[RMDB]
RNA sequence: GGGAACGACUCGAGUAGAGUCGAAAAGAUCAAUUAUGAUUGCAAUGUAAUAUGUAAAGGCAGACAUAUCUAGCUGUCGCCUUAGCUAGAGAUAGCCGAUUUAUUCCUUUCAUAAGAACGGCAAGAAGCUAAUAUUACCAUUCGUGGUAAUAUUAGCAAAAGAAACAACAACAACAAC
Reactivity to 2A3 in 0.01 (KOAc 150mM, MgCl2 10mM, bicine 150mM(pH8.5), 24C), signal-to-noise 9, nucleotides 027 to 126: g050a070u100c040a020a110u160u070a090u210g060a040u030u030g010c030a030a060u120g030u160a050a050u060a060u150g110u150a050a050a030g010g000c050a020g040a110c030a060u170a040u050c040u040a020g040c010u010g050u100c040g100c010c010u030u050a020g000c010u010a000g010a010g010a070u060a030g000c010c020g020a000u020u060u030a050u030u040c010c000u020u060u030c020a030u020a050a030g030a090a010c010g030g000c030a030a020g060a060a010
Reactivity to DMS in 0.01 (KOAc 150mM, MgCl2 10mM, bicine 150mM(pH8.5), 24C), signal-to-noise 9, nucleotides 027 to 126: g010a120u010c090a090a130u010u010a080u000g010a140u000u000g010c080a050a080u010g010u000a200a060u000a020u000g010u010a030a030a040g010g020c300a070g010a050c090a050u000a110u000c030u000a040g010c040u000g010u000c130g010c160c080u010u010a020g010c030u000a010g000a040g000a070u000a070g020c010c050g000a110u010u000u010a120u020u000c040c000u000u000u000c020a030u000a020a060g000a080a060c170g000g000c040a040a050g000a100a110